[RMDB]
RNA sequence: GGGAACGACUCGAGUAGAGUCGAAAAGGGGAGAGUGUCCCGCGCUAUGGAUGCAGUUCAACGACUAAACGGUGAUGGGCUAGCGUAAUGAAUGCGUUCUGCACACUCUUACGCCGGCUUAAGAUAUAGUCUACUCCCACUCCGAAAGGAGGGGUACGAGACACUUCAACUUCGGUUGAAGUGUCUCAAAAGAAACAACAACAACAAC
Reactivity to 2A3 in 0.01 (KOAc 150mM, MgCl2 10mM, bicine 150mM(pH8.5), 24C), signal-to-noise 1, nucleotides 027 to 156: g010g000g000g000a040g000a000g000u110g100u060c020c010c000g000c010g000c030u150a110u170g070g000a040u120g120c040a030g020u030u100c090a140a060c040g070a000c020u070a040a090a110c070g060g060u050g030a110u140g080g000g000c000u000a000g000c040g010u010a010a010u070g000a140a270u020g010c030g110u160u160c120u230g010c010a000c000a000c000u010c020u000u020a010c010g000c030c010g000g050c000u050u020a030a020g030a020u090a010u000a070g020u030c000u050a150c070u110c000c020c010a170c010u000c000c000g070a090a020a000g000g000a000g000g000g000g000u030a030c120